Annotation: Structure probing data (2A3) for a 207-nucleotide construct. It was measured as part of the RMDB library M2RFPK.

RNA sequence: GGGAACGACUCGAGUAGAGUCGAAAAAUGAGAUCCCAUCUUGCACACUGUGCUAAUUUGAGAUUCUCAUGCCUCCUACUUGGAGAGAUCUGGACUAGAAGUCAGGGCAUCUUACUCUGCCAGCCACAAAACGUACAAGGCUUCGGCCUUGUACGAACUUCUUCCGUUUCUUCGGAAACGGAAGAAGAAAAGAAACAACAACAACAAC
Reactivity to 2A3 in 0.01 (KOAc 150mM, MgCl2 10mM, bicine 150mM(pH8.5), 24C), signal-to-noise 1, nucleotides 027 to 156: a010u000g000a000g000a000u020c000c000c020a000u010c000u010u010g000c000a010c020a090c230u300g020u010g010c040u090a040a060u010u090u040g010a020g010a050u300u070c000u000c020a000u060g050c000c010u010c010c000u110a200c110u060u120g040g000a030g000a020g000a100u020c050u050g000g010a020c020u040a150g050a130a020g100u000c020a020g080g010g000c020a040u090c030u020u040a060c000u000c000u010g020c000c000a010g040c000c010a050c020a030a140a060a060c020g020u000a000c000a000a000g000g000c000u000u120c210g020g000c000c000u000u000g010u010a010c000g000a000a000